Source: RMDB library OK1LIB, as collected in RNAgym. Chemical mapping of a 177-nucleotide RNA with 2A3 and DMS. The RNA was probed in 150 mM KOAc, 10 mM MgCl2 and 150 mM bicine (pH 8.5) at 24 C. DMS adducts were read by reverse transcription with MarathonRT. Values are in units of 0.01, from 0 to 300, in steps of 10. The 2A3 profile rests on 9,791 reads. The DMS profile rests on 5,460 reads.
[RMDB]
RNA sequence: GGGAACGACUCGAGUAGAGUCGAAAACACGGUUCGGCGCGGCGCGAUUCCCACCACCACCAGCGGCAAGCUCAAACGACGCGCCGUCGCGCAGGCUUAUCGAGACGGCACACUGCCCCGUCUUGCCCCAAGGACGGUAAUUCGUUACCGUCCUUGGAAAAGAAACAACAACAACAAC
Reactivity to 2A3 in 0.01 (KOAc 150mM, MgCl2 10mM, bicine 150mM(pH8.5), 24C), signal-to-noise 7, nucleotides 027 to 126: c080a020c060g090g010u240u240c040g040g000c010g000c000g020g000c010g000c010g040a040u040u050c000c000c000a010c010c020a030c010c010a020c000c010a020g030c020g040g000c060a060a040g020c020u040c080a100a100a070c080g090a020c010g010c010g000c010c020g020u050c020g000c000g000c020a040g040g000c020u100u080a060u230c050g000a010g020a030c020g000g030c050a010c020a030c110u130g020c010c020c010c000g010u010c000u010u030g040c010c010
Reactivity to DMS in 0.01 (KOAc 150mM, MgCl2 10mM, bicine 150mM(pH8.5), 24C), signal-to-noise 3, nucleotides 027 to 126: c050a090c150g010g000u010u010c040g030g030c020g030c010g000g000c010g000c030g000a120u000u010c010c010c000a090c150c110a080c070c040a060c060c030a040g030c010g000g000c060a030a090g030c020u010c070a060a110a140c100g000a150c040g000c020g010c020c010g020u010c000g010c010g050c060a130g010g040c040u000u000a060u020c070g000a050g020a050c030g000g000c080a150c090a030c060u000g020c080c100c010c030g000u000c000u000u000g010c060c070